[RMDB]
RNA sequence: GGGAACGACUCGAGUAGAGUCGAAAAGGCAGGGAACAAGAUAAAAAAAGCUUUUCGGGAAGCAUACGCCCACAUGAGAAUCAGGAUUUCCAAAGCUAUCAGUCAAACUUUUCACGAGAUUCUGUGUCCUCAGCUCUUGGAGCAGUUGGACCUGCUCAAUUCUCUUCCUUUUCGAAGGAAGAGAAUUAAAAGAAACAACAACAACAAC
Reactivity to 2A3 in 0.01 (KOAc 150mM, MgCl2 10mM, bicine 150mM(pH8.5), 24C), signal-to-noise 5, nucleotides 027 to 156: g020g000c020a020g030g040g050a080a050c060a080a060g070a090u300a100a090a040a020a020a020a020g040c030u080u040u090u140c110g040g010g030a050a020g010c030a050u090a180c070g030c010c050c010a040c020a050u130g020a020g040a080a050u090c020a040g000g030a040u020u010u000c030c000a040a030a010g040c050u080a040u230c040a060g140u090c040a070a080a100c030u060u080u130u140c140a040c090g020a030g010a070u070u060c020u030g030u030g050u080c010c020u030c020a040g010c000u030c030u110u120g040g000a030g010c010a010g010u090u110g050g020a040c000c000u000g000c010u000c010
Reactivity to DMS in 0.01 (KOAc 150mM, MgCl2 10mM, bicine 150mM(pH8.5), 24C), signal-to-noise 3, nucleotides 027 to 156: g010g030c030a040g000g030g010a130a090c050a090a110g010a170u030a000a000a080a090a050a100a160g010c020u000u000u010u000c130g030g030g020a080a060g000c020a150u000a090c050g010c020c010c010a080c060a110u000g000a050g000a030a040u000c040a020g020g020a060u010u000u000c020c020a020a040a040g020c020u000a150u000c040a130g040u000c090a080a080a040c020u000u000u000u000c090a090c070g010a040g000a030u010u000c020u000g010u000g020u000c010c010u000c010a060g010c080u000c040u010u020g020g010a130g050c010a110g010u010u000g020g000a100c130c010u000g020c030u010c070